[RMDB]
RNA sequence: GGGAACGACUCGAGUAGAGUCGAAAAAACAAUGAGUUGCAUAACAUGUCGAAAUAAUAGCGUAAUGCCUAGGCGCAUUACAUGCUCAUCAUGCACUGAUUUAAUUACCGAAAAGAUUACAGCUAUUGAACAUGCCGUUAAAACUACCACUAAUCAAGUCUAAAGAUCUCUUCGGAGAUCUUUAGACAAAAGAAACAACAACAACAAC
Reactivity to DMS in 0.01 (KOAc 150mM, MgCl2 10mM, bicine 150mM(pH8.5), 24C), signal-to-noise 1, nucleotides 027 to 156: a020a060c030a080a120u000g000a150g030u020u020g000c020a160u000a100a060c010a040u000g000u010c000g020a090a080a120u000a020a050u000a050g030c070g000u010a020a030u000g000c020c050u010a250g000g070c050g010c070a010u010u000a010c000a010u000g070c070u000c120a100u000c070a070u000g060c010a010c070u000g020a120u000u000u000a050a110u000u000a130c070c000g010a010a050a050a050g000a030u010u000a040c040a130g050c020u000a070u000u010g020a070a050c010a060u000g010c000c010g010u000u000a010a070a080a110c050u010a130c020c020a050c070u000a030a070u000c070a020a300
Reactivity to 2A3 in 0.01 (KOAc 150mM, MgCl2 10mM, bicine 150mM(pH8.5), 24C), signal-to-noise 2, nucleotides 027 to 156: a000a010c090a040a060u030g010a000g030u080u050g110c040a000u050a090a040c060a110u110g130u130c050g080a060a020a080u200a010a050u050a050g010c010g000u000a000a020u020g020c010c050u080a120g080g020c060g000c060a010u030u000a000c010a000u080g000c010u020c030a060u020c010a010u030g000c010a000c010u020g070a050u000u000u050a060a100u090u090a040c000c030g050a020a000a040a040g050a030u100u060a030c020a010g030c020u040a020u170u080g040a030a000c000a050u070g040c040c010g020u050u100a060a090a040a030c000u090a060c000c060a000c100u000a000a060u000c070a050a020
Description: An RNA of 207 nucleotides, treated with DMS and 2A3 and read out base by base. Source: RMDB library OK3TST, as collected in RNAgym. Reactivities are rounded to 0.1 and cut off at 0 and 3.